[RMDB]
RNA sequence: GGGAACGACUCGAGUAGAGUCGAAAAUACUGGUUCUUUCAUCAUGAUUCUACAUUUGCUCUCCUGUGUGCCCAUGGAAUCACAAGGCGCUCCACCCUAUGGGAUUCUCCUUCUGCAUCCUUUUAGCCAUAACAGUACUCUUCGGAGUACUGUUAUGAAAAGAAACAACAACAACAAC
Reactivity to 2A3 in 0.01 (KOAc 150mM, MgCl2 10mM, bicine 150mM(pH8.5), 24C), signal-to-noise 4, nucleotides 027 to 126: u150a010c040u040g050g030u060u050c030u050u090u090c040a080u040c010a040u110g060a080u110u040c030u090a090c020a130u060u070u130g040c010u010c010u030c030c030u050g030u030g020u050g110c000c010c000a040u080g040g000a060a030u060c020a010c010a090a040g050g000c030g030c020u020c010c000a060c010c020c000u040a130u100g020g010g020a020u060u010c030u020c020c000u060u010c010u040g040c010a060u060c020c000u030u140u060u130a060g030c030
Reactivity to DMS in 0.01 (KOAc 150mM, MgCl2 10mM, bicine 150mM(pH8.5), 24C), signal-to-noise 6, nucleotides 027 to 126: u010a090c100u010g010g010u010u000c040u000u000u000c060a070u000c080a090u000g000a080u000u000c030u010a070c070a100u000u000u000g000c050u000c030u000c030c020u000g030u010g020u000g000c030c030c030a110u000g000g000a070a040u000c050a060c070a070a110g010g010c080g000c060u000c020c040a090c060c030c010u000a060u000g000g010g010a090u000u000c030u000c050c030u000u010c030u000g000c050a080u000c030c030u010u000u000u000a100g010c190